Notes: This 177-nucleotide RNA was probed chemically with 2A3. Values cover nucleotides 27 to 126. For 2A3, 499 sequencing reads were counted. Reactivities are rounded to 0.1 and cut off at 0 and 3.
RNA sequence: GGGAACGACUCGAGUAGAGUCGAAAAUGCAUUGCACAGAUUCACCACUUCUAGAGUUAGUCAUGGUGGCUUUAGUGCCCAAAGCCCUGCAGCACUGACCAGAAUGAUGGCAACAACUGACACCAUGCUCUGGGGCAUCGUUCGCGAUGCCCCAGAGAAAAGAAACAACAACAACAAC
Reactivity to 2A3 in 0.01 (KOAc 150mM, MgCl2 10mM, bicine 150mM(pH8.5), 24C), signal-to-noise 1, nucleotides 027 to 126: u120g030c040a030u000u290g000c040a010c030a020g110a010u110u090c000a020c030c000a040c060u070u080c000u010a160g000a050g060u200u070a060g000u000c100a070u240g010g030u120g060g020c020u100u000u040a180g010u100g040c000c030c040a000a020a020g000c030c000c060u120g000c000a000g000c010a000c050u080g000a090c000c000a040g040a210a000u010g150a050u010g100g000c000a090a100c060a030a030c030u010g060a120c000a030c090c000a060u080g050